This 177-nucleotide RNA was probed chemically with 2A3. Source: RMDB library RFM100, as collected in RNAgym.

[RMDB]
RNA sequence: GGGAACGACUCGAGUAGAGUCGAAAAGAAAGAAAGAAAGAAAUCCUUUCGAUUUCGCGCGCUAAGCAGGAACCGAGACUUUGUCAUUUGCUAGCAGUCAGGUACCUGAAGUAGCGCGCGUGAUCAAGCUCUUGAGCGCUUUCGAGCGCUCAAGAGCAAAAGAAACAACAACAACAAC
Reactivity to 2A3 in 0.01 (KOAc 150mM, MgCl2 10mM, bicine 150mM(pH8.5), 24C), signal-to-noise 2, nucleotides 027 to 126: g130a000a090a000g130a060a030a000g000a000a080a000g080a020a090a150u050c000c000u020u090u140c070g000a000u000u000u000c010g010c010g000c010g010c000u000a000a010g230c010a000g000g010a010a000c000c000g090a130g040a180c120u260u260u080g070u230c000a240u160u130u300g030c160u130a030g030c000a000g010u000c000a000g000g010u090a160c000c000u010g000a100a000g070u010a000g010c000g000c000g000c000g000u000g000a000u000c050a000a010